[RMDB]
An RNA of 177 nucleotides, treated with 2A3 and DMS and read out base by base.
For 2A3 the reverse transcriptase was SuperScript II with manganese.

RNA sequence: GGGAACGACUCGAGUAGAGUCGAAAAACCUGUGGGAAAGGUCCAACCUCACAUGUCCUGUAUAGAAUAAAGAGGGAUAUAUGUGGUCAGACCUAUCCCACAAGUAAAAGUCGUGGUUCGCCACGACCAAUCGCUAGCAGUUCGCUGCUAGCGAUUGAAAAGAAACAACAACAACAAC
Reactivity to 2A3 in 0.01 (KOAc 150mM, MgCl2 10mM, bicine 150mM(pH8.5), 24C), signal-to-noise 2, nucleotides 027 to 126: a000c000c010u000g000u010g010g020g000a030a020a020g000g020u000c010c020a010a010c000c010u000c000a000c000a040u010g000u000c010c010u020g090u120a190u060a180g300a300a060u200a210a140a060g130a050g040g010g000a000u010a000u000a000u030g000u010g010g020u000c040a010g000a000c000c000u000a010u000c000c010c000a000c000a000a000g000u010a020a100a030a020g000u010c000g010u010g010g070u070u050c140g000c040c000a000c000g020a000c000
Reactivity to DMS in 0.01 (KOAc 150mM, MgCl2 10mM, bicine 150mM(pH8.5), 24C), signal-to-noise 2, nucleotides 027 to 126: a080c020c020u000g030u000g000g000g030a000a240a020g000g020u000c000c020a120a090c000c000u000c000a000c050a010u000g020u000c000c000u000g010u000a200u000a120g010a140a130u000a110a070a150g000a300g010g010g010a020u000a020u000a030u000g000u010g000g010u010c100a100g010a020c000c000u000a060u000c010c000c000a000c000a000a030g000u010a060a080a080a120g000u000c000g020u000g010g010u000u010c280g010c010c000a000c000g010a000c010